[RMDB]
RNA sequence: GGGAACGACUCGAGUAGAGUCGAAAAAGGAGCUCCCUGGCCGAGAGCUUCUUCGUGGAUUAUGAGGAGAACGAGGGGGCUGGCCCUUACCUGCUCAACGGGUCCUACCUGGAGCUGAGCAGCGACAGAUUGCACUGGUGUUCGCACCAGUGCAAUCAAAAGAAACAACAACAACAAC
Reactivity to DMS in 0.01 (KOAc 150mM, MgCl2 10mM, bicine 150mM(pH8.5), 24C), signal-to-noise 2, nucleotides 027 to 126: a040g000g010a000g000c010u000c000c030c010u000g000g000c110c050g000a150g010a080g010c010u010u000c000u000u000c040g020u000g000g040a120u010u020a050u000g010a090g000g010a080g020a080a050c170g000a060g020g010g000g000g000c090u010g010g000c010c000c080u000u030a120c270c020u010g000c010u000c000a050a100c050g010g010g010u010c130c150u000a150c040c030u000g010g010a170g030c060u010g010a020g020c010a030g010c100g000a150c150a130
Reactivity to 2A3 in 0.01 (KOAc 150mM, MgCl2 10mM, bicine 150mM(pH8.5), 24C), signal-to-noise 2, nucleotides 027 to 126: a000g070g000a010g020c000u000c000c010c030u030g090g040c060c050g180a170g020a040g080c000u010u030c000u020u000c000g110u110g060g070a150u210u170a040u300g090a030g080g030a020g040a070a030c050g000a040g000g030g020g000g020c030u030g010g000c000c000c000u010u120a010c000c000u000g000c000u000c020a040a060c050g050g000g000u110c000c040u130a110c000c010u100g080g030a060g120c080u030g020a000g000c010a000g000c000g020a010c000a060